[RMDB]
This 207-nucleotide RNA was probed chemically with DMS and 2A3.
The 2A3 profile rests on 6,661 reads.
The reactions ran in a buffer of 150 mM KOAc, 10 mM MgCl2 and 150 mM bicine (pH 8.5), at 24 C.
RNA sequence: GGGAACGACUCGAGUAGAGUCGAAAAACAUCAGUUCGCUGAUGUAAAAAAGCGUACUACUAGUCGAUGAAAUAUUGGUCAGCGAUGGUCCCAAAUAGGAUGUUGACGCUGACUGUAUGGAGACUAGUAUCGCAAAAAAACCACUUUCGAGUGGUAACAUUCUAAGACUAUUCGUAGUCUUAGAAUGAAAAGAAACAACAACAACAAC
Reactivity to DMS in 0.01 (KOAc 150mM, MgCl2 10mM, bicine 150mM(pH8.5), 24C), signal-to-noise 4, nucleotides 027 to 156: a040c010a020u000c010a020g030u000u010c300g060c020u010g000a010u000g020u000a000a040a080a090a060a120g000c020g000u000a110c160u000a040c020u000a010g020u000c000g010a150u000g020a170a100a030u000a040u010u000g080g000u000c000a020g030c000g020a140u000g010g010u000c010c000c020a040a160a160u010a050g010g010a030u000g020u000u000g020a240c050g040c000u010g000a030c000u000g010u000a010u000g010g000a210g000a030c010u000a000g010u000a020u000c030g020c010a010a000a030a080a060a090a070c000c000a020c010u000u010u010c230g000a050g060u000g000g000u000a020a120
Reactivity to 2A3 in 0.01 (KOAc 150mM, MgCl2 10mM, bicine 150mM(pH8.5), 24C), signal-to-noise 6, nucleotides 027 to 156: a000c000a000u010c000a010g040u080u120c190g030c150u000g010a020u060g010u130a080a040a000a000a020a050g030c030g030u100a090c050u000a000c010u000a030g000u000c020g290a300u050g020a030a020a000u090a030u080u300g030g000u010c000a000g010c000g070a080u110g090g020u030c010c020c050a130a240a110u240a070g010g000a020u060g070u300u140g100a080c020g000c000u000g000a000c000u000g000u000a010u000g000g010a020g000a000c000u000a000g000u000a000u010c000g000c000a060a040a040a000a000a010a050c030c000a030c030u110u100u080c270g120a010g000u010g000g020u030a010a010